[RMDB]
RNA sequence: GGGAACGACUCGAGUAGAGUCGAAAAUACAUCACCUCAAGGGGUGGCGCACACAAUGCUGGAGUAAGGACAGCAGUAGUCUCUGUCAGCCACCAUGGGGUGAGCUUAGGCUGUCAAGACUCUAAGCCUCUUGAAUUGCAAUAACUACCCCCCUGAGUGGCGAUAUAAUAUUCGUAUUAUAUCGCCAAAAAGAAACAACAACAACAAC
Reactivity to DMS in 0.01 (KOAc 150mM, MgCl2 10mM, bicine 150mM(pH8.5), 24C), signal-to-noise 2, nucleotides 027 to 156: u020a080c040a130u010c030a050c000c010u000c040a110a100g030g000g050g060u000g020g000c010g000c020a040c090a050c020a090a150u000g000c090u000g000g000a130g050u010a140a170g000g030a160c010a020g000c030a090g010u010a090g020u000c080u000c010u000g030u000c050a110g020c020c000a040c000c020a240u000g000g000g030g020u000g000a050g010c100u000u000a080g020g020c030u000g020u000c080a010a110g030a070c030u020c060u000a120a070g010c060c040u000c040u020u000g000a090a150u000u000g020c030a060a180u020a050a080c070u000a230c010c000c030c020c000c000u020g000a200g030
Reactivity to 2A3 in 0.01 (KOAc 150mM, MgCl2 10mM, bicine 150mM(pH8.5), 24C), signal-to-noise 2, nucleotides 027 to 156: u220a000c040a050u000c000a020c000c000u000c010a060a040g140g000g140g010u040g000g000c040g010c000a100c000a000c010a060a080u060g000c020u020g000g030a120g070u120a110a030g150g040a010c010a000g030c000a030g070u180a040g040u040c070u010c000u190g100u070c050a000g010c020c000a040c000c000a020u040g000g010g030g000u010g000a010g010c000u050u020a080g000g090c050u060g030u070c020a060a030g070a090c030u030c010u130a070a060g000c040c010u090c000u050u100g060a140a110u080u060g010c040a030a080u070a170a010c010u070a040c000c000c000c000c000c070u020g030a050g030
The data come from the RNA Mapping Database (RMDB), library OK3TST. Chemical mapping of a 207-nucleotide RNA with DMS and 2A3.